[RMDB]
RNA sequence: GGGAACGACUCGAGUAGAGUCGAAAAAUAUGACUCCCCAGCACCGGGCGGUGAUGAAUUGGGACGCAGGCGCGGAGCCCAGGGACCACUCCCCCUGCACAGACAUGAGACCAUAGGGGACCUGUCUACUAUGAUAAACGUUCGCGUUUAUCAUAGUAAAAGAAACAACAACAACAAC
Reactivity to 2A3 in 0.01 (KOAc 150mM, MgCl2 10mM, bicine 150mM(pH8.5), 24C), signal-to-noise 1, nucleotides 027 to 126: a000u140a040u060g020a040c020u000c020c000c000c000a000g000c010a020c020c010g180g270g020c140g000g030u030g030a040u100g050a010a170u120u060g040g000g000a020c090g030c040a010g050g050c050g000c100g110g010a010g000c000c020c000a020g010g010g020a000c000c040a030c000u020c000c000c010c010c000u000g030c020a010c020a040g120a030c030a060u190g000a010g020a060c060c020a050u070a040g070g010g010g000a010c000c000u040g000u020c000u000
Reactivity to DMS in 0.01 (KOAc 150mM, MgCl2 10mM, bicine 150mM(pH8.5), 24C), signal-to-noise 2, nucleotides 027 to 126: a070u000a070u000g000a130c080u000c010c020c000c020a150g000c030a060c020c030g030g010g010c160g010g050u000g020a050u010g000a070a100u000u010g000g010g010a130c150g020c060a020g000g000c190g050c120g020g000a140g020c040c030c050a050g000g010g000a120c020c040a300c050u000c030c010c000c000c060u000g000c020a130c110a090g000a050c070a050u000g020a060g020a110c050c010a090u010a090g010g000g020g020a130c030c030u020g000u020c080u010